[RMDB]
RNA sequence: GGGAACGACUCGAGUAGAGUCGAAAAGAUAUGGAUUGGCCGAUAAGCUUGGGUCGGAAACGACCCAAAGCUUUUGACGGCUUGUCCUAAGUCAAAAGGGGCUUAGUACUUCGGUACUAAGCCCCAACAAAGCAGAUAUGUUCGCAUAUCUGCUUUGAAAAGAAACAACAACAACAAC
Reactivity to DMS in 0.01 (KOAc 150mM, MgCl2 10mM, bicine 150mM(pH8.5), 24C), signal-to-noise 3, nucleotides 027 to 126: g000a010u000a060u010g000g000a030u000u000g000g000c000c000g010a030u010a010a010g020c000u000u000g010g000g010u000c000g010g000a010a030a040c000g000a020c000c000c000a000a010a020g020c000u000u000u000u000g010a280c010g000g000c010u000u000g000u000c000c000u000a020a110g000u000c000a080a060a150a130g020g010g010g020c000u000u000a010g010u000a010c000u000u010c240g020g010u000a010c000u000a000a000g010c010c010c000c000a000a020